[RMDB]
Source: RMDB library OK1LIB, as collected in RNAgym. An RNA of 177 nucleotides, treated with DMS and 2A3 and read out base by base. For 2A3, 2,309 sequencing reads were counted. For DMS, 2,944 sequencing reads were counted. Conditions: 150 mM KOAc, 10 mM MgCl2 and 150 mM bicine (pH 8.5), 24 C.
RNA sequence: GGGAACGACUCGAGUAGAGUCGAAAAGUCACAGACACUCUUGACAACUUGGAUCAAAUCUUUGAUCCGAAGAAACACUUUUCCGAGGAAGAGAUGCUGUCUGCAGCCACCAUACUAGGCUUGGAGGAGGUUAUAGACCGUUCGCGGUCUAUAACCUAAAAGAAACAACAACAACAAC
Reactivity to DMS in 0.01 (KOAc 150mM, MgCl2 10mM, bicine 150mM(pH8.5), 24C), signal-to-noise 3, nucleotides 027 to 126: g030u020c080a300c020a010g000a040c000a050c030u000c000u020u000g000a200c090a050a100c130u020u000g000g000a000u000c010a010a020a150u050c180u050u010u020g010a000u010c020c040g000a020a000g010a120a070a210c100a130c040u000u000u020u000c020c070g030a060g000g000a150a080g010a040g010a040u010g010c180u000g020u000c010u000g050c060a040g030c020c010a110c030c050a100u030a090c130u000a060g000g050c030u000u020g030g000a120g030g000
Reactivity to 2A3 in 0.01 (KOAc 150mM, MgCl2 10mM, bicine 150mM(pH8.5), 24C), signal-to-noise 4, nucleotides 027 to 126: g050u060c010a020c020a060g060a010c010a020c030u020c000u030u090g060a050c100a140a060c030u000u040g000g000a010u010c030a010a090a050u130c120u080u070u060g060a070u010c010c000g030a010a000g000a010a150a000c090a030c070u070u090u120u070c040c040g030a040g060g020a010a130g000a040g000a030u130g040c130u030g000u010c000u000g030c020a020g040c010c010a050c010c010a100u070a190c040u120a080g030g020c040u010u050g040g060a060g010g090